[RMDB]
RNA sequence: GGGAACGACUCGAGUAGAGUCGAAAAGUGUCUUAGGUUUUCUUCCGGCAGUCGUAGUGAUGUAAGUACUUGUGGUUUCUGGACAACAUAAAGGACCGUUGUCCUGCAGGUGCGGACUAGAAAUCACCUCUCAGAAGGCUUUCGAGCCUUCUGAGAGAAAAGAAACAACAACAACAAC
Reactivity to DMS in 0.01 (KOAc 150mM, MgCl2 10mM, bicine 150mM(pH8.5), 24C), signal-to-noise 1, nucleotides 027 to 126: g000u010g010u000c000u000u060a030g010g000u000u000u060u010c030u040u000c010c000g010g010c040a040g040u000c040g010u010a090g030u000g000a050u020g000u010a050a080g000u000a090c080u000u000g000u000g000g020u000u020u030c000u010g030g000a090c010a000a030c050a070u000a020a220a110g000g000a000c060c300g030u000u030g000u000c000c010u000g000c300a040g000g030u020g060c180g010g000a130c010u050a030g030a000a040a010u000c000a060c030
Reactivity to 2A3 in 0.01 (KOAc 150mM, MgCl2 10mM, bicine 150mM(pH8.5), 24C), signal-to-noise 2, nucleotides 027 to 126: g010u020g030u060c020u130u140a110g000g070u100u000u050u000c000u060u000c000c010g040g020c000a010g040u060c000g060u090a050g000u040g090a080u050g060u040a000a170g000u000a030c030u090u110g030u100g020g080u040u000u000c050u080g070g020a010c000a040a000c020a050u220a250a300a120g120g040a050c020c060g100u020u100g020u040c000c010u010g030c090a030g130g000u020g000c040g010g020a010c010u000a010g060a040a100a000u010c010a000c010

Overview:
Structure probing data (DMS and 2A3) for a 177-nucleotide construct. The reactions ran in a buffer of 150 mM KOAc, 10 mM MgCl2 and 150 mM bicine (pH 8.5), at 24 C. Reactivities are rounded to 0.1 and cut off at 0 and 3.